[RMDB]
RNA sequence: GGGAACGACUCGAGUAGAGUCGAAAAUCGCUGGAGCUGGUGAUGGUGUCACCGCCGGUGUGCUGCACCUGCUCGAUCAGGUACUCGUGGCCCUUCUGGGCGAAGCGGCGGCGCUCCUCAGUGUCCAGGUACACGUAGUUGGCCCACACCUCAAUGGCAAGUUGUGCCUAUUCGUAGGCACAACUUGAAAAGAAACAACAACAACAAC
Reactivity to DMS in 0.01 (KOAc 150mM, MgCl2 10mM, bicine 150mM(pH8.5), 24C), signal-to-noise 1, nucleotides 027 to 156: u010c050g000c010u010g040g000a300g020c010u000g020g000u020g020a090u030g000g000u010g000u000c010a010c010c020g040c030c000g000g040u000g040u040g040c100u020g020c030a030c040c000u040g000c160u010c100g030a180u020c080a030g010g030u000a040c000u000c050g000u010g010g010c010c000c020u010u000c200u000g040g020g020c090g050a100a040g000c070g020g110c030g030g020c050g010c040u000c080c040u040c030a050g000u000g050u000c050c030a070g020g010u000a070c080a040c120g000u020a160g000u000u000g000g040c000c000c030a200c090a070c070c000u000c070a120a110u040g010g000
Reactivity to 2A3 in 0.01 (KOAc 150mM, MgCl2 10mM, bicine 150mM(pH8.5), 24C), signal-to-noise 2, nucleotides 027 to 156: u100c000g000c040u000g000g000a020g000c010u000g010g040u160g130a170u210g020g090u100g070u130c060a060c060c010g030c010c000g120g070u090g020u110g020c090u110g010c040a010c010c000u000g060c090u090c210g070a210u170c000a000g000g020u060a110c050u040c250g060u030g080g000c000c000c000u120u120c100u230g030g010g000c000g020a040a040g030c000g000g000c060g000g000c000g000c000u020c010c000u000c010a010g010u090g210u020c030c000a000g030g010u070a050c030a000c000g080u120a090g040u150u040g030g000c000c000c010a000c000a020c010c040u190c110a120a150u120g050g000
Annotation: The record gives the reactivity of an RNA of 207 nucleotides to DMS and 2A3. DMS (dimethyl sulfate) methylates the pairing face of unpaired adenines and cytosines. For 2A3 the reverse transcriptase was SuperScript II with manganese. The reactions ran in a buffer of 150 mM KOAc, 10 mM MgCl2 and 150 mM bicine (pH 8.5), at 24 C. The DMS profile rests on 1,908 reads.